The record gives the reactivity of an RNA of 207 nucleotides to DMS and 2A3. For 2A3, 2,833 sequencing reads were counted. The data come from the RNA Mapping Database (RMDB), library M2RFPK. Values cover nucleotides 27 to 156.
RNA sequence: GGGAACGACUCGAGUAGAGUCGAAAAAUACACCAGCAGUAGGACUCAGCGACCGUCACAACAAGGUUGUGCUGGUAUCCGACGGUCGUAUAGCCCUAUCUUGCAGGUUGCCUUGCACUGACGUGCCACACCAUUUACAGAUUCGUCUGUAAAUGAAGUAACAUUUGUGGUUCGCCACAAAUGUUACAAAAGAAACAACAACAACAAC
Reactivity to DMS in 0.01 (KOAc 150mM, MgCl2 10mM, bicine 150mM(pH8.5), 24C), signal-to-noise 2, nucleotides 027 to 156: a070u000a100c040a260c000c000a140g030c030a060g030u000a060g000g010a050c000u000c170a300g000c020g030a010c000c000g000u010c030a190c120a160a040c030a060a130g000g000u000u000g010u000g030c040u000g000g030u010a050u020c100c030g020a030c020g040g000u000c030g030u000a110u030a040g030c000c020c000u010a030u000c020u050u020g000c040a120g010g000u000u000g060c020c140u000u010g000c020a090c070u000g010a170c220g000u000g010c000c090a090c030a130c060c000a030u000u000u000a000c000a020g010a080u000u000c300g020u000c000u000g000u000a000a010a010u000g000a040a120
Reactivity to 2A3 in 0.01 (KOAc 150mM, MgCl2 10mM, bicine 150mM(pH8.5), 24C), signal-to-noise 4, nucleotides 027 to 156: a000u160a010c130a010c030c020a010g000c000a010g020u030a010g010g010a020c010u030c080a020g000c000g000a000c000c000g010u010c030a030c040a160a110c050a290a100g100g010u050u020g040u120g080c090u080g080g040u030a090u080c030c060g000a000c000g000g000u010c010g010u060a080u120a060g000c000c010c000u010a020u090c050u020u190g000c040a030g020g000u030u070g030c010c000u050u130g000c010a010c020u160g070a030c100g000u000g000c000c020a060c020a020c010c020a010u000u000u000a000c000a010g020a020u020u100c190g090u020c100u000g010u000a000a000a010u000g020a050a010